[RMDB]
Description
Chemical mapping of a 207-nucleotide RNA with 2A3 and DMS. Reactivities are rounded to 0.1 and cut off at 0 and 3. The RNA was probed in 150 mM KOAc, 10 mM MgCl2 and 150 mM bicine (pH 8.5) at 24 C. It was measured as part of the RMDB library OK3TST.
RNA sequence: GGGAACGACUCGAGUAGAGUCGAAAAUAAACUCGCCAAAGAAUUAUUCAUACACUUUAUCUUCUUUUAUCAGCUAAAUGUACUCACUGUUUGAAUCAGAGAAUUCUGGCCAAACUUUCCAUUGCAUUGAACACGUGCAUUAGUUUGUCUUGCAGGAGAUAAUUUAUGAGUUCGCUCAUAAAUUAUCAAAAGAAACAACAACAACAAC
Reactivity to 2A3 in 0.01 (KOAc 150mM, MgCl2 10mM, bicine 150mM(pH8.5), 24C), signal-to-noise 3, nucleotides 027 to 156: u060a000a060a000c020u050c050g040c020c010a020a110a020g060a060a140u100u130a040u180u190c070a060u210a150c080a030c040u160u180u110a160u140c030u170u050c020u020u260u060u080a100u120c030a000g020c010u050a140a080a120u090g030u020a010c010u020c110a070c030u040g030u080u080u040g040a050a040u120c020a010g030a010g090a230a060u190u010c010u010g000g000c030c010a020a000a020c000u060u110u070c050c030a100u050u060g020c020a000u000u150g110a050a010c040a030c170g000u010g020c010a000u010u020a010g030u050u050u120g020u050c030u020u120g040c060a040g090g090a090
Reactivity to DMS in 0.01 (KOAc 150mM, MgCl2 10mM, bicine 150mM(pH8.5), 24C), signal-to-noise 1, nucleotides 027 to 156: u000a060a100a090c060u000c030g010c040c110a060a170a170g020a060a110u020u000a030u010u000c020a210u000a160c060a060c040u010u000u010a050u000c010u000u000c010u000u010u000u010a130u000c050a070g000c070u000a050a060a030u010g040u000a050c080u000c030a050c140u010g000u000u000u010g030a060a110u000c050a100g020a160g000a070a140u000u000c030u000g000g050c030c060a040a070a030c030u000u000u000c040c020a090u010u000g000c050a070u000u000g010a080a090c160a060c110g030u000g010c030a070u000u000a050g010u010u010u000g030u020c060u010u000g010c020a110g070g010a280